[RMDB]
RNA sequence: GGGAACGACUCGAGUAGAGUCGAAAAGGGGUCGAGAAGUCGAUGAGGCAGAGACAUGCUCUGAAGCCUCCACGGAGCAACAGCUCUGCUACCCACCAUCGUCACUCGACGGAGGCACCCAAAGCUGGUCGGCAUUCUUCGGAAUGCCGACCAGCAACAUGAACAAAUAGUUCGCUAUUUGUUCAUGAAAAGAAACAACAACAACAAC
Reactivity to 2A3 in 0.01 (KOAc 150mM, MgCl2 10mM, bicine 150mM(pH8.5), 24C), signal-to-noise 2, nucleotides 027 to 156: g020g000g000g000u010c010g010a010g030a220a050g030u020c000g010a000u000g010a030g000g020c000a000g010a010g020a040c070a130u170g000c010u000c010u000g030a130a020g000c000c000u010c010c000a020c010g020g000a000g020c020a030a040c080a060g050c000u000c000u000g010c000u060a080c100c030c010a040c030c000a000u010c010g020u000c000a030c060u000c000g010a010c040g020g000a000g010g000c000a030c000c000c020a070a070a020g000c000u000g010g020u000c010g000g000c050a010u070u020c030u030u040c080g110g020a050a030u070g040c000c000g000a020c000c000a000g000c000a000a000
Reactivity to DMS in 0.01 (KOAc 150mM, MgCl2 10mM, bicine 150mM(pH8.5), 24C), signal-to-noise 1, nucleotides 027 to 156: g030g000g040g010u000c020g000a010g050a050a230g080u000c000g000a060u000g020a210g010g000c020a030g010a040g000a100c050a300u030g000c000u000c030u000g010a020a150g010c020c010u000c000c010a260c100g000g020a030g020c000a080a050c100a080g030c010u000c000u000g010c010u000a030c000c000c060a300c060c000a040u010c000g000u000c080a300c040u000c050g010a070c060g010g030a060g030g030c010a080c010c000c000a090a070a150g000c010u000g000g000u000c000g000g000c000a030u000u010c000u010u000c280g070g030a090a000u000g040c000c000g000a000c030c010a000g000c000a000a060